RNA sequence: GGGAACGACUCGAGUAGAGUCGAAAAGAUAUGGACGUACAAGAGCGAAGAACGUGGCCUCGGAAACGAGGCGUAACAUCGGGAGCUCGAGUACGUCCUAAGUCAAAGUGCUACUUCGGUAGCACAAGGUUAAAAAGGACUUCGGUCCUUUUUAACCAAAAGAAACAACAACAACAAC
Reactivity to DMS in 0.01 (KOAc 150mM, MgCl2 10mM, bicine 150mM(pH8.5), 24C), signal-to-noise 3, nucleotides 027 to 126: g000a030u000a300u000g010g000a020c000g020u000a010c010a030a300g000a010g010c020g020a300a200g000a050a060c100g010u000g010g010c000c000u020c000g000g000a070a040a180c010g010a010g000g010c000g020u000a030a040c100a060u000c000g000g010g030a300g010c010u000c000g020a300g010u000a000c000g010u000c000c010u000a010a050g000u000c030a080a070a140g000u000g000c000u000a000c000u010u010c170g040g010u000a000g000c000a000c000a020a000
Reactivity to 2A3 in 0.01 (KOAc 150mM, MgCl2 10mM, bicine 150mM(pH8.5), 24C), signal-to-noise 1, nucleotides 027 to 126: g020a010u040a050u060g000g010a010c000g020u000a000c000a060a040g000a000g010c000g140a300a110g030a300a030c090g000u020g070g000c000c000u020c000g000g000a040a050a000c000g030a010g020g000c000g000u030a010a010c030a030u260c040g050g010g040a160g000c000u000c000g010a000g030u020a000c000g000u020c000c000u010a000a000g000u000c010a000a030a080g000u000g030c010u000a000c010u020u070c260g170g010u010a020g040c000a000c000a000a010
Chemical mapping of a 177-nucleotide RNA with DMS and 2A3.
Reactivities are given for positions 27 through 126.
For 2A3, 2,116 sequencing reads were counted.
The RNA was probed in 150 mM KOAc, 10 mM MgCl2 and 150 mM bicine (pH 8.5) at 24 C.
It was measured as part of the RMDB library TTRDEL.